[RMDB]
RNA sequence: GGGAACGACUCGAGUAGAGUCGAAAAGAAAAGGGAGGUUCGGGUGGGAAGAGUAUAUCCUACGGGAAUCCGUGGUUUCCCCUUAUGUCCAGCCCCUCCCCGGUCCUGGUGAAGGGGGACUCCGGAACAUUAAGUCAAACUUCGGUUUGACUUAAUGAAAAGAAACAACAACAACAAC
Reactivity to DMS in 0.01 (KOAc 150mM, MgCl2 10mM, bicine 150mM(pH8.5), 24C), signal-to-noise 3, nucleotides 027 to 126: g010a080a080a100a190g000g010g000a140g000g000u010u010c160g010g000g010u010g010g000g010a030a030g010a040g000u010a070u000a070u010c030c040u000a090c100g010g000g010a110a130u000c000c000g000u000g000g010u000u000u010c010c000c010c030u010u000a030u000g000u020c000c000a040g010c300c010c010c030u010c040c030c060c120g020g010u000c100c020u010g000g020u000g010a040a040g010g000g000g000g010a030c000u000c130c010g010g000a070a210
Reactivity to 2A3 in 0.01 (KOAc 150mM, MgCl2 10mM, bicine 150mM(pH8.5), 24C), signal-to-noise 2, nucleotides 027 to 126: g040a010a130a020a020g030g080g020a180g080g000u220u230c110g020g060g080u300g030g050g040a040a000g080a020g080u030a060u020a020u180c020c010u060a050c160g070g000g000a050a040u050c010c000g000u030g000g000u010u090u180c000c000c000c000u070u060a080u220g090u030c000c000a010g040c010c000c000c000u070c030c010c000c000g040g030u040c000c010u010g000g010u040g030a000a020g010g000g020g000g020a000c010u000c010c010g000g020a010a020
Notes:
The record gives the reactivity of an RNA of 177 nucleotides to DMS and 2A3. The DMS profile rests on 2,603 reads. 2A3 adducts were read by reverse transcription with SuperScript II with manganese.